[RMDB]
RNA sequence: GGGAACGACUCGAGUAGAGUCGAAAAGCCAGGUAGGUGCAGGCUAUAGCUGCCAUCGGCUGACCUAGAGAAGACACAUCAGCUGAUCCUUUGGACCCUAUGACUUGAGACAGAAGUUCUGGGCUUCUCCUCCUGCGGCCUAGCUCUGAGACAAUGAAAAUGGGCUAUUAUUCGUAAUAGCCCAUUUAAAAGAAACAACAACAACAAC
Reactivity to DMS in 0.01 (KOAc 150mM, MgCl2 10mM, bicine 150mM(pH8.5), 24C), signal-to-noise 3, nucleotides 027 to 156: g030c010c010a040g010g050u010a060g020g020u000g030c030a070g000g010c050u000a120u000a100g040c060u010g010c020c060a160u000c010g020g010c010u010g010a030c030c020u000a120g010a150g010a090a130g000a170c060a110c110a090u000c030a060g010c010u000g030a080u000c010c030u010u010u000g020g020a080c050c030c020u010a120u000g010a050c040u010u000g000a170g020a230c070a080g000a080a060g030u000u000c070u000g020g030g030c020u000u000c020u000c030c010u000c040c040u010g030c050g020g030c030c010u000a060g000c020u010c010u000g000a220g010a100c090a060a100u010g000a070
Reactivity to 2A3 in 0.01 (KOAc 150mM, MgCl2 10mM, bicine 150mM(pH8.5), 24C), signal-to-noise 1, nucleotides 027 to 156: g000c000c020a000g050g000u070a020g000g030u080g040c080a000g040g080c100u150a090u100a140g050c050u010g030c000c000a030u050c020g000g020c000u010g010a040c000c030u070a080g060a020g040a300a020g090a000c080a000c000a170u030c010a010g000c000u010g020a050u250c000c000u110u110u090g090g000a070c000c010c020u120a060u170g030a040c000u040u050g030a000g050a130c070a030g110a150a030g070u070u030c010u020g000g010g000c000u170u040c010u020c030c000u010c000c020u010g000c000g040g000c000c000u010a020g040c000u000c010u070g050a030g020a040c130a190a070u130g120a050